[RMDB]
Source: RMDB library OK3TST, as collected in RNAgym. This 207-nucleotide RNA was probed chemically with 2A3. The 2A3 profile rests on 361 reads.
RNA sequence: GGGAACGACUCGAGUAGAGUCGAAAAUGAGUUUAAGUAUACAAAUUGUAUAAGAACAAGUGAUGAUAAGUAUAUUUAUAGGUUCUUUCUGGAAGAUAAUUAUUUUGGUUGUGCUAUUAUGGUAUAUGAUGAUAUGAGUGAGUAUGAAGUAGUAGUACAUCGUGCAAUGGUUCGCCAUUGCACGAUGAAAAGAAACAACAACAACAAC
Reactivity to 2A3 in 0.01 (KOAc 150mM, MgCl2 10mM, bicine 150mM(pH8.5), 24C), signal-to-noise 1, nucleotides 027 to 156: u060g010a040g030u000u130u160a150a010g010u000a040u000a050c120a110a230a240u220u130g010u030a030u080a300a000g010a080a000c030a010a040g030u010g080a040u010g000a040u050a240a120g000u000a000u000a010u060u090u090a190u040a060g060g000u000u000c000u000u030u000c030u080g040g000a030a030g000a050u040a120a050u160u210a080u110u150u020u080g010g000u000u000g000u010g030c010u000a090u140u000a000u240g000g040u010a050u000a010u180g010a000u000g000a000u000a000u150g030a030g030u000g010a050g010u090a090u100g050a030a010g020u050a010g030u050a000g000u010a040
High 2A3 reactivity points to a flexible backbone, as in loops and unpaired stretches. The RNA was probed in 150 mM KOAc, 10 mM MgCl2 and 150 mM bicine (pH 8.5) at 24 C. Reactivities are rounded to 0.1 and cut off at 0 and 3.